Structure probing data (DMS and 2A3) for a 177-nucleotide construct. The reactions ran in a buffer of 150 mM KOAc, 10 mM MgCl2 and 150 mM bicine (pH 8.5), at 24 C. Source: RMDB library OK2TRN, as collected in RNAgym. Values cover nucleotides 27 to 126. DMS adducts were read by reverse transcription with MarathonRT. The DMS profile rests on 1,467 reads.

[RMDB]
RNA sequence: GGGAACGACUCGAGUAGAGUCGAAAACUGCCUCUGGGUGACAUGAGAUGAAAUGACUCAUUCUUCCAGCACCCAGCUGUCAUGUCAUUCUGUUAGAGAGCUUGAUCUUUGUAGGGGGCACUCAAACGGAUAAGUAGGUCUUCGGACCUACUUAUCCAAAAGAAACAACAACAACAAC
Reactivity to DMS in 0.01 (KOAc 150mM, MgCl2 10mM, bicine 150mM(pH8.5), 24C), signal-to-noise 2, nucleotides 027 to 126: c170u000g000c030c020u000c010u020g010g000g030u000g000a050c050a080u000g020a130g000a090u010g000a010a090a160u040g020a150c210u000c070a080u010u000c040u000u000c170c020a050g010c010a030c020c000c000a220g020c070u000g040u000c020a050u010g000u000c040a120u000u010c000u010g010u000u000a050g020a070g010a070g010c090u010u010g010a120u010c020u000u020u010g040u010a100g000g010g010g000g000c080a070c090u010c040a070a050a100c200
Reactivity to 2A3 in 0.01 (KOAc 150mM, MgCl2 10mM, bicine 150mM(pH8.5), 24C), signal-to-noise 1, nucleotides 027 to 126: c000u010g020c000c010u030c020u070g020g030g020u000g030a020c010a110u030g000a060g030a070u020g000a010a050a180u260g080a130c010u000c070a030u100u000c000u120u040c040c000a030g040c000a020c030c000c000a030g090c020u000g080u020c000a020u090g000u060c020a030u070u050c020u030g070u180u140a030g010a000g000a010g040c060u140u230g130a190u030c000u060u090u070g070u060a020g120g010g020g000g090c010a030c020u060c000a070a060a020c010